[RMDB]
RNA sequence: GGGAACGACUCGAGUAGAGUCGAAAAGAUAUGGAAUACGCGACCCCUAUGAAGAGCGUCGGAAACGACGCUUGGAGGAGCGUCGCCAGUAUUCCUAAGUCAAAACUAGAGGGUUCGCCCUCUAGAAUCUACUAUGUUUCUUCGGAAACAUAGUAGAAAAAGAAACAACAACAACAAC
Reactivity to DMS in 0.01 (KOAc 150mM, MgCl2 10mM, bicine 150mM(pH8.5), 24C), signal-to-noise 5, nucleotides 027 to 126: g020a050u000a300u010g020g000a030a010u000a010c020g010c010g010a020c020c040c010c010u000a170u010g000a180a170g000a010g010c010g030u000c000g010g000a100a110a170c010g010a010c000g020c000u000u000g000g000a040g010g010a030g040c220g010u000c000g010c020c140a040g040u000a010u000u000c000c000u000a020a120g000u010c030a090a090a120a180c000u000a010g000a030g010g010g020u000u010c260g010c010c000c000u000c000u000a000g000a110a080
Reactivity to 2A3 in 0.01 (KOAc 150mM, MgCl2 10mM, bicine 150mM(pH8.5), 24C), signal-to-noise 2, nucleotides 027 to 126: g010a010u070a050u140g000g000a000a010u010a010c000g010c000g020a000c000c050c000c000u150a300u300g000a020a020g000a000g000c000g020u000c010g000g040a050a070a040c020g010a000c000g010c010u000u010g000g010a000g000g000a060g080c250g020u000c000g000c020c020a000g010u010a000u010u000c000c000u000a130a020g040u020c010a010a020a130a180c000u000a010g000a010g030g040g000u070u110c240g140c030c000c000u000c010u000a000g000a010a010